[RMDB]
RNA sequence: GGGAACGACUCGAGUAGAGUCGAAAAAAGAAAAUAUUGUUUCCCACUAGUGCUAAGCUUCCAUUUUCUUGCUUGUCAUAUUAUUUCAGUUCAUGACUCUGAAGAUACUCAUGAUUUAAUACCGUACUUGAAACAGCUGCACCUGGAAACUGAGUAAAGGUCAUAAUUAUUUCGAUAAUUAUGACCUAAAAGAAACAACAACAACAAC
Reactivity to DMS in 0.01 (KOAc 150mM, MgCl2 10mM, bicine 150mM(pH8.5), 24C), signal-to-noise 2, nucleotides 027 to 156: a050a100g000a060a040a090a110u010a100u000u000g000u010u000u000c000c010c010a210c090u000a080g040u000g020c030u000a090a060g010c010u000u020c050c030a110u000u000u000u000c020u010u000g010c020u000u000g010u000c040a100u000a100u010u000a030u000u000u000c030a090g010u000u010c060a080u010g010a070c070u000c050u000g010a120a150g020a140u000a030c070u000c020a030u000g010a060u000u000u010a050a090u010a030c070c050g000u000a040c050u000u000g000a180a050a090c070a060g020c040u010g010c020a080c060c040u000g030g000a070a040a030c030u020g000a080g010u000a070a140
Reactivity to 2A3 in 0.01 (KOAc 150mM, MgCl2 10mM, bicine 150mM(pH8.5), 24C), signal-to-noise 3, nucleotides 027 to 156: a000a010g130a050a030a010a020u220a120u100u090g030u040u010u020c020c040c000a020c050u040a050g040u010g040c020u040a050a020g020c020u070u020c060c010a100u050u040u090u140c020u050u050g010c030u070u050g030u050c030a030u040a050u220u110a050u000u110u050c020a000g000u030u040c020a040u080g050a040c010u020c040u100g070a060a030g020a120u080a070c030u060c100a020u060g030a110u090u110u150a100a040u090a050c030c050g030u020a040c040u020u070g020a080a040a040c020a030g010c010u050g010c010a020c020c020u010g030g000a080a080a030c060u060g000a030g090u000a050a190
Source information: Source: RMDB library OK3TST, as collected in RNAgym. Chemical mapping of a 207-nucleotide RNA with DMS and 2A3. DMS adducts were read by reverse transcription with MarathonRT. The reactions ran in a buffer of 150 mM KOAc, 10 mM MgCl2 and 150 mM bicine (pH 8.5), at 24 C. For DMS, 4,791 sequencing reads were counted. Values cover nucleotides 27 to 156. For 2A3 the reverse transcriptase was SuperScript II with manganese.